[RMDB]
RNA sequence: GGGAACGACUCGAGUAGAGUCGAAAAACGGCAUCACCGCCGUUCUAUCAAGACAGAUAGGCUGCUACGGUCUACUCCAGAUACUAUUCUGAUUGAAACUGCAAAAAGAGUGAGGAGAACGGCACACAGGCGGGCUCGCCGCACUACGCGUGGUGGCAAGAAAGCCUUUAUUCGUAAAGGCUUUCUUAAAAGAAACAACAACAACAAC
Reactivity to 2A3 in 0.01 (KOAc 150mM, MgCl2 10mM, bicine 150mM(pH8.5), 24C), signal-to-noise 4, nucleotides 027 to 156: a000c020g020g000c020a070u100c070a060c050c060g000c020c000g000u040u000c000u000a040u030c040a090a020g160a130c040a020g020a080u050a020g040g000c030u030g000c030u100a040c060g060g020u030c020u040a030c010u020c020c010a010g030a070u060a100c090u090a100u180u100c030u020g080a150u090u050g050a110a120a060c060u100g060c080a040a070a030a060a080g090a020g070u120g030a030g020g030a020g040a050a000c030g030g000c020a010c010a000c010a040g020g020c030g030g020g030c050u080c070g060c010c000g030c000a070c050u110a030c060g030c020g050u030g010g030u010g040g000c000
Reactivity to DMS in 0.01 (KOAc 150mM, MgCl2 10mM, bicine 150mM(pH8.5), 24C), signal-to-noise 3, nucleotides 027 to 156: a040c030g000g000c030a170u010c110a120c070c030g020c000c010g000u000u000c020u010a100u000c030a110a130g020a180c080a100g010a070u010a030g010g000c050u000g000c030u010a090c040g000g020u010c020u020a080c020u010c030c020a140g010a110u000a090c110u010a130u000u000c010u010g020a260u000u010g010a110a080a180c080u000g010c060a070a080a090a090a090g000a090g020u010g020a140g010g000a080g000a030a060c040g010g030c030a080c060a060c080a070g010g010c020g000g000g010c070u000c040g030c020c000g020c040a060c040u000a040c060g010c070g010u010g020g050u000g020g050c050